Overview
The record gives the reactivity of an RNA of 170 nucleotides to DMS and 2A3. The DMS profile rests on 13,444 reads. High 2A3 reactivity points to a flexible backbone, as in loops and unpaired stretches.
[RMDB]
RNA sequence: GGGAACGACUCGAGUAGAGUCGAAAAGUAUAAAGGUUGCUGCUAUGCAGUCUAAACUUACAGAUCUUAAAUGCACAUCUGUGGUUCUCCUCUCUGUGCUCCAACAGUUACACUUAGAGGCUAAUAGUAAGCAAUGCGUUCGCGCAUUGCAAAAGAAACAACAACAACAAC
Reactivity to DMS in 0.01 (KOAc 150mM, MgCl2 10mM, bicine 150mM(pH8.5), 24C), signal-to-noise 6, nucleotides 027 to 129: g030u040a080u020a030a120a080g000g050u010u030g020c030u030g000c080u050a050u030g000c080a000g010u030c060u020a130a070a070c000u030u040a000c030a050g010a060u030c100u030u040a090a060a110u000g000c250a090c180a090u010c010u000g040u000g020g020u010u050c080u020c040c070u010c010u000c090u010g000u010g040c070u090c120c070a080a120c180a000g000u060u050a120c040a030c050u070u010a040g000a060g030g050c210u030a080a020u030a050g020u050a080a040
Reactivity to 2A3 in 0.01 (KOAc 150mM, MgCl2 10mM, bicine 150mM(pH8.5), 24C), signal-to-noise 7, nucleotides 027 to 129: g100u070a040u100a190a230a030g020g000u020u010g010c000u010g060c040u060a020u130g000c010a010g000u000c000u020a020a020a010c000u070u170a000c010a000g010a000u020c010u080u170a120a200a180u270g010c100a080c010a100u000c000u000g030u010g000g030u060u020c010u040c020c010u000c000u000c000u010g010u050g010c030u050c030c020a090a090c010a120g040u110u090a030c030a020c030u010u040a020g010a000g040g000c000u010a040a020u010a120g070u010a090a030